[RMDB]
RNA sequence: GGGAACGACUCGAGUAGAGUCGAAAAAGGUGAUUUCUCCUGCACCCUUAUCAAUGGAGGAACUCGACUUUGCUGUGGGUCCCAAAGGGACCUUAGGUGCAGACAGUUACCGGCGGUGAAGUGUGAGCAUAGGUUCGUGUCUUCGGACACGAACCAAGAGUGAGAAGAUCUUCGGAUCUUCUCACUCAAAAGAAACAACAACAACAAC
Reactivity to DMS in 0.01 (KOAc 150mM, MgCl2 10mM, bicine 150mM(pH8.5), 24C), signal-to-noise 1, nucleotides 027 to 156: a000g010g000u000g010a290u000u010u000c030u000c020c040u000g000c000a150c000c030c030u000u000a160u000c070a110a070u000g000g010a100g010g000a080a050c050u010c040g000a090c000u000u010u000g010c010u050g060u020g000g000g020u010c010c000c060a050a170a150g020g010g030a020c030c000u000u000a010g010g020u000g060c050a130g010a090c090a080g020u000u000a020c020c060g010g040c010g000g020u010g020a000a090g020u000g000u000g010a010g000c000a050u020a070g030g020u000u010c010g040u000g010u000c000u000u010c300g060g010a060c020a010c010g000a020a020c000c000a000a030
Reactivity to 2A3 in 0.01 (KOAc 150mM, MgCl2 10mM, bicine 150mM(pH8.5), 24C), signal-to-noise 2, nucleotides 027 to 156: a000g000g030u030g020a060u030u030u010c010u020c000c010u070g010c020a040c010c000c040u090u130a080u140c130a080a080u200g010g020a010g060g000a040a030c010u000c020g020a020c020u020u010u010g010c020u050g020u120g030g000g020u030c000c010c020a170a090a100g010g010g000a010c030c010u040u070a030g010g000u010g020c020a060g110a300c040a040g000u020u100a020c000c000g000g000c000g000g000u020g030a000a050g060u080g060u050g060a010g030c100a150u100a190g010g010u000u000c000g000u000g030u000c010u020u020c110g040g010a010c010a000c000g010a000a000c000c000a000a000
An RNA of 207 nucleotides, treated with DMS and 2A3 and read out base by base.
For DMS, 2,394 sequencing reads were counted.
The data come from the RNA Mapping Database (RMDB), library M2RFPK.
For DMS the reverse transcriptase was MarathonRT.
The 2A3 profile rests on 1,390 reads.